[RMDB]
RNA sequence: GGGAACGACUCGAGUAGAGUCGAAAAUGGUAUGAACAUUCACACAAUCCUGUGACGCAGGUACUAUCGACAAUCGUCUAUAAAAGAAAACUGACUGGGUGCAGUGGCGCAUGCCUAUAAUCCGAGCAUCCAUAGCUGGUUUCGACCAGCUAUGGAUAAAAGAAACAACAACAACAAC
Reactivity to DMS in 0.01 (KOAc 150mM, MgCl2 10mM, bicine 150mM(pH8.5), 24C), signal-to-noise 2, nucleotides 027 to 126: u000g000g020u000a050u010g000a060a090c060a050u000u000c050a050c020a090c050a100a140u010c040c070u010g000u020g010a060c300g020c110a070g010g000u000a060c110u000a050u000c060g010a030c040a060a150u030c100g000u000c040u000a200u010a040a090a150a100g000a090a060a100a120c130u030g000a090c070u010g020g020g020u000g030c110a030g010u000g020g000c190g020c030a030u000g000c000c020u000a150u010a110a060u000c010c010g000a080g020c130
Reactivity to 2A3 in 0.01 (KOAc 150mM, MgCl2 10mM, bicine 150mM(pH8.5), 24C), signal-to-noise 2, nucleotides 027 to 126: u090g020g040u070a020u080g030a040a040c000a050u000u080c030a000c000a010c000a070a080u110c000c000u010g050u110g140a070c140g000c120a000g050g000u060a090c080u070a030u110c040g030a000c010a110a160u100c120g050u000c070u040a110u060a070a120a070a060g130a080a080a060a060c040u030g080a040c020u050g010g080g000u030g030c070a030g000u000g020g000c060g000c030a040u080g010c020c000u090a120u040a070a020u030c000c010g010a010g000c020